[RMDB]
RNA sequence: GGGAACGACUCGAGUAGAGUCGAAAACUGUAUUUCUGAUAUUGGAGCCCUCGGUAAAAGGCUAGCGAAAGCUUACGAGCAGUGUGAGUCUGUCUCAUUCGGUAGUUGCAAAUGCUGUUGGUAUGCUCUUAUACUACCCAGUUCUGUCCGGUAAUUCAAUAAAUAACGGGUUCGCCCGUUAUUUAUUAAAAGAAACAACAACAACAAC
Reactivity to DMS in 0.01 (KOAc 150mM, MgCl2 10mM, bicine 150mM(pH8.5), 24C), signal-to-noise 2, nucleotides 027 to 156: c030u010g000u000a140u010u000u010c030u000g020a130u000a110u000u000g030g030a150g020c010c030c020u010c040g040g020u000a060a090a140a120g010g010c040u000a050g020c050g000a100a070a110g000c040u000u000a070c040g030a070g020c040a070g020u000g010u000g020a170g020u000c040u020g020u020c020u000c020a240u000u000c060g030g000u010a080g020u010u010g050c090a060a090a160u010g000c010u010g020u000u000g000g050u000a070u010g010c030u000c060u000u000a110u000a060c020u000a060c020c020c010a090g010u010u000c050u000g000u000c030c030g000g000u000a050a200u010u000c060
Reactivity to 2A3 in 0.01 (KOAc 150mM, MgCl2 10mM, bicine 150mM(pH8.5), 24C), signal-to-noise 2, nucleotides 027 to 156: c050u040g020u100a070u050u220u090c080u060g060a080u050a030u140u100g040g000a000g010c000c000c030u000c020g000g030u030a100a100a030a030g010g010c000u030a030g050c010g010a060a010a020g020c020u130u130a080c130g000a000g000c040a030g020u030g020u030g070a060g060u060c030u050g070u030c020u000c030a100u050u040c020g100g020u020a010g020u010u090g050c090a070a120a130u080g000c010u020g040u180u020g050g000u080a070u190g000c000u000c010u040u040a020u030a050c040u040a010c000c000c030a000g000u060u060c030u080g070u010c060c080g040g120u150a140a110u130u180c260